Annotation: This 177-nucleotide RNA was probed chemically with DMS and 2A3. High DMS reactivity at an A or C suggests that its Watson-Crick edge is free. The 2A3 profile rests on 1,863 reads. For 2A3 the reverse transcriptase was SuperScript II with manganese. DMS adducts were read by reverse transcription with MarathonRT.

[RMDB]
RNA sequence: GGGAACGACUCGAGUAGAGUCGAAAAUCGGCUUGCGGCUGUGGCACACGCUGUUCGGGUCUGCUGACGGUUACACGGAUUACGCGGGAGCCGGCAAGCACGACAUCAUGAUUCAGAUUCAUGCCGACUGCCACCUUUUAUUCGUAAAAGGUGGCAGAAAAGAAACAACAACAACAAC
Reactivity to DMS in 0.01 (KOAc 150mM, MgCl2 10mM, bicine 150mM(pH8.5), 24C), signal-to-noise 2, nucleotides 027 to 126: u010c010g010g000c000u000u010g020c030g020g000c010u020g060u000g040g020c070a170c080a100c050g030c020u010g050u010u000c040g000g010g030u000c070u000g010c060u010g020a120c110g010g030u010u020a060c070a080c010g010g000a110u000u010a050c130g010c030g000g000g000a080g010c000c020g010g030c030a040a030g000c010a090c050g010a020c160a080u010c050a020u000g010a070u000u000c180a080g010a170u010u000c030a020u010g000c080c020g000a200
Reactivity to 2A3 in 0.01 (KOAc 150mM, MgCl2 10mM, bicine 150mM(pH8.5), 24C), signal-to-noise 2, nucleotides 027 to 126: u030c010g000g000c000u000u050g010c060g070g010c100u130g050u140g200g000c040a060c000a000c100g000c050u030g020u050u020c000g000g000g070u000c030u040g060c060u110g070a110c090g060g000u110u100a050c090a020c030g060g050a120u200u300a060c070g010c010g090g060g040a010g000c020c010g020g010c030a000a000g010c050a060c080g010a020c010a090u120c000a040u050g020a070u170u120c060a010g080a210u030u060c000a040u030g030c000c010g020a060